The record gives the reactivity of an RNA of 177 nucleotides to 2A3 and DMS.
RNA sequence: GGGAACGACUCGAGUAGAGUCGAAAACCGCGAAAGGCUGCAAGAAGUCUCUUGGAAUAGAGCACGAAACAGGGUGAUAGUCCCGUACUGCAGGCGAGUAUCGGACGCGUCAGCUCCAGAGUAUCGGUUUGAUGACUAGGUUCGCCUAGUCAUCAAAAAAAGAAACAACAACAACAAC
Reactivity to 2A3 in 0.01 (KOAc 150mM, MgCl2 10mM, bicine 150mM(pH8.5), 24C), signal-to-noise 2, nucleotides 027 to 126: c000c000g020c010g040a130a060a070g120g040c000u000g000c010a000a000g010a030a000g030u030c010u000c000u000u000g000g000a000a000u010a000g020a000g000c020a000c010g010a000a040a000c030a020g000g000g000u000g020a010u000a000g000u000c000c000c000g010u010a010c020u000g010c000a030g000g040c000g000a000g020u040a040u080c020g000g020a050c050g010c030g170u120c050a050g000c070u000c000c010a020g020a000g110u140a110u100c060g060g000
Reactivity to DMS in 0.01 (KOAc 150mM, MgCl2 10mM, bicine 150mM(pH8.5), 24C), signal-to-noise 5, nucleotides 027 to 126: c000c000g010c060g000a080a130a120g010g000c010u000g000c010a010a000g010a020a020g000u050c000u000c000u000u010g000g070a300a060u000a010g000a010g010c000a010c020g030a300a110a040c020a220g010g000g010u010g020a160u010a050g000u000c010c000c010g010u000a290c050u010g010c010a020g000g000c000g000a070g010u000a060u010c060g010g010a100c100g000c020g000u020c110a060g000c070u010c010c020a100g010a110g000u010a040u020c030g000g020

DMS adducts were read by reverse transcription with MarathonRT. The 2A3 profile rests on 1,807 reads. The reactions ran in a buffer of 150 mM KOAc, 10 mM MgCl2 and 150 mM bicine (pH 8.5), at 24 C.